[RMDB]
RNA sequence: GGGAACGACUCGAGUAGAGUCGAAAAUUGCAAGCCUUCGGGCUUGCAAGGUGUCGGAAUGCGGAAUAUAUAAUCCUCCGCUUAACGAUUAUACCGACUUAAGUGCCAGGCUGUUCGCAGCCUGGAAUGUUGGUAGUGUGUUCGCACACUACCAACAAAAAGAAACAACAACAACAAC
Reactivity to 2A3 in 0.01 (KOAc 150mM, MgCl2 10mM, bicine 150mM(pH8.5), 24C), signal-to-noise 1, nucleotides 027 to 126: u030u010g020c000a030a120g010c000c000u020u050c230g140g000g020c010u050u000g000c000a020a000g000g010u040g020u010c030g000g040a140a010u030g020c010g000g050a030a000u180a000u040a010u060a200a190u130c000c030u000c000c020g000c000u000u000a060a010c000g020a000u060u120a060u090a070c030c000g050a030c080u190u200a150a100g110u050g180c010c000a000g000g000c000u000g040u070u070c180g010c120a000g020c000c000u000g000g000a000a010
Reactivity to DMS in 0.01 (KOAc 150mM, MgCl2 10mM, bicine 150mM(pH8.5), 24C), signal-to-noise 2, nucleotides 027 to 126: u000u010g000c000a000a000g030c000c010u000u000c210g010g040g030c000u020u000g000c000a000a000g000g020u010g000u010c000g010g010a080a100u000g000c000g000g000a040a060u000a140u000a080u000a210a150u010c260c060u000c000c010g020c010u020u000a110a240c030g000a000u000u000a120u000a140c000c010g010a090c150u000u020a070a100g010u000g000c000c000a010g000g010c000u000g020u000u000c270g000c000a000g000c000c000u000g000g000a000a020

Chemical mapping of a 177-nucleotide RNA with 2A3 and DMS. The 2A3 profile rests on 922 reads. The RNA was probed in 150 mM KOAc, 10 mM MgCl2 and 150 mM bicine (pH 8.5) at 24 C. DMS adducts were read by reverse transcription with MarathonRT. It was measured as part of the RMDB library M2PK50.